[RMDB]
RNA sequence: GGGAACGACUCGAGUAGAGUCGAAAAUGCAGUACAAAACCAGGAAAUUGCCAUUGGUACAAUCCACACACCCUGUUCCAAUUUCACCAGUUUUACUCAUUUGUAUGCAGUCAUGUGUGUAGUUCUGUGCAGUUUUAUAUGUGUAGAUUUGUGUAAAGUCCAUUUAUUAUUUCGAUAAUAAAUGGACAAAAGAAACAACAACAACAAC
Reactivity to DMS in 0.01 (KOAc 150mM, MgCl2 10mM, bicine 150mM(pH8.5), 24C), signal-to-noise 3, nucleotides 027 to 156: u000g020c020a080g030u000a170c090a060a040a080a110c030c030a080g000g000a040a060a070u000u010g030c030c100a170u000u010g010g020u010a040c060a090a110u010c040c040a070c060a040c070a080c070c020c040u020g000u000u000c060c030a050a130u000u000u000c030a120c080c010a090g010u010u000u000u000a080c050u010c050a080u000u000u000g030u010a070u000g010c060a100g000u000c060a060u000g010u000g020u010g020u010a110g010u010u000c030u010g020u010g030c010a050g010u000u000u000u010a080u000a050u010g010u000g020u000a040g010a140u010u000u000g030u000g010u010a040a090a240
Reactivity to 2A3 in 0.01 (KOAc 150mM, MgCl2 10mM, bicine 150mM(pH8.5), 24C), signal-to-noise 6, nucleotides 027 to 156: u070g010c010a010g060u040a080c040a050a080a020a040c020c000a020g030g070a020a090a090u090u090g040c040c030a070u020u100g020g000u050a070c030a020a090u040c060c000a030c000a000c010a010c030c000c020u020g010u070u010c050c020a050a070u070u110u110c040a050c040c020a010g030u020u030u060u080a040c020u040c020a070u050u070u090g110u080a060u090g060c030a020g030u050c080a100u080g030u010g010u000g020u070a050g050u060u010c030u060g030u050g020c010a010g000u000u020u140u040a110u060a040u080g050u000g010u020a040g030a130u040u110u090g050u030g040u090a020a040a110